An RNA of 177 nucleotides, treated with 2A3 and read out base by base.
The 2A3 profile rests on 522 reads.
RNA sequence: GGGAACGACUCGAGUAGAGUCGAAAAAUUUACCCUAUCUGUUAUCACCUAACGCAAGUUAUCCACCAUCCAAGCGUCGAAACUGUAUGAAAACAAGGUUUUAGUUUCACCACAUCACGUUCACCUUGACAUUCCUCCAUUUCGAUGGAGGAAUGUCAAAAGAAACAACAACAACAAC
Reactivity to 2A3 in 0.01 (KOAc 150mM, MgCl2 10mM, bicine 150mM(pH8.5), 24C), signal-to-noise 2, nucleotides 027 to 126: a000u140u070u170a150c000c000c000u070a060u010c010u020g000u040u050a070u120c010a000c030c000u040a160a000c020g010c060a020a090g000u010u040a030u040c000c090a030c000c000a030u110c010c010a000a000g010c000g030u030c040g050a000a000a180c030u080g010u140a110u210g150a000a010a030a000c070a000a070g010g080u070u010u040u150a010g000u000u010u070c010a010c080c000a080c010a010u090c000a000c030g010u000u020c170a180c160c000u000u000